Structure probing data (2A3) for a 207-nucleotide construct.

RNA sequence: GGGAACGACUCGAGUAGAGUCGAAAAGUGAAAGCUCCUUCUCUCGCAAUGUGGAACUCAUGAUUCUCAUGACCCCUGGUUGGAGAGAUCCGGACUAGGAGCCAGGGGGCCUCUGAUUCUGCCAGCCAAAACUGUCGUAAGUUCGCUUACGACAGAAUCUUUUACUGACGUUCGCGUCAGUAAAAGAAAAAGAAACAACAACAACAAC
Reactivity to 2A3 in 0.01 (KOAc 150mM, MgCl2 10mM, bicine 150mM(pH8.5), 24C), signal-to-noise 2, nucleotides 027 to 156: g080u080g020a040a000a060g010c020u040c020c010u060u040c020u000c020u010c010g040c060a060a100u070g020u150g090g000a060a040c010u030c060a060u030g010a100u250u080c050u050c090a030u020g070a070c000c000c000c060u040g030g020u080u090g060g000a070g010a000g000a070u040c030c030g070g040a060c080u130a040g040g020a000g030c030c000a000g000g030g000g000g010c040c000u020c040u020g060a100u080u020c030u080g030c040c020a030g020c020c030a030a080a070a140c030u000g000u000c000g010u010a010a010g000u020u100c180g000c130u000u010a000c000g000a010c000a000g000a000a000
2A3 adducts were read by reverse transcription with SuperScript II with manganese. Source: RMDB library M2RFPK, as collected in RNAgym.